The data come from the RNA Mapping Database (RMDB), library TTRDES. Chemical mapping of a 177-nucleotide RNA with DMS and 2A3. The DMS profile rests on 15,210 reads. The reactions ran in a buffer of 150 mM KOAc, 10 mM MgCl2 and 150 mM bicine (pH 8.5), at 24 C.

RNA sequence: GGGAACGACUCGAGUAGAGUCGAAAAGAUAUGGAGUGGAAGACUUUUGACGCGUCCCAGUUCGGAAACGAACUGCGACGCGAUAAGUCUCCACUCCUAAGUCAAAACGUUCAGUUCGCUGAACGAACAACUAAGAUCAGUUCGCUGAUCUUAGUUGAAAAGAAACAACAACAACAAC
Reactivity to DMS in 0.01 (KOAc 150mM, MgCl2 10mM, bicine 150mM(pH8.5), 24C), signal-to-noise 6, nucleotides 027 to 126: g010a030u010a250u000g000g000a020g020u010g000g000a060a070g010a010c000u000u000u010u000g030a160c140g030c000g020u000c000c100c000a020g010u000u000c010g010g000a050a050a110c000g010a010a010c000u000g020c300g010a010c000g030c000g010a010u000a010a030g000u000c000u000c000c000a000c000u000c000c000u000a000a040g000u000c020a130a090a100a250c040g000u000u000c010a020g010u000u010c270g020c000u000g000a010a010c000g010a120a210
Reactivity to 2A3 in 0.01 (KOAc 150mM, MgCl2 10mM, bicine 150mM(pH8.5), 24C), signal-to-noise 7, nucleotides 027 to 126: g020a000u030a020u100g000g000a020g010u020g030g040a230a140g010a080c050u120u160u300u300g210a160c300g010c010g010u000c030c050c000a000g000u000u000c000g000g000a010a030a030c000g000a000a000c000u000g010c010g010a000c010g000c010g000a010u020a010a000g000u000c000u000c000c000a000c000u000c000c000u000a000a000g000u000c000a010a020a080a150c020g000u000u010c010a020g010u060u110c300g030c120u010g000a020a000c010g020a030a040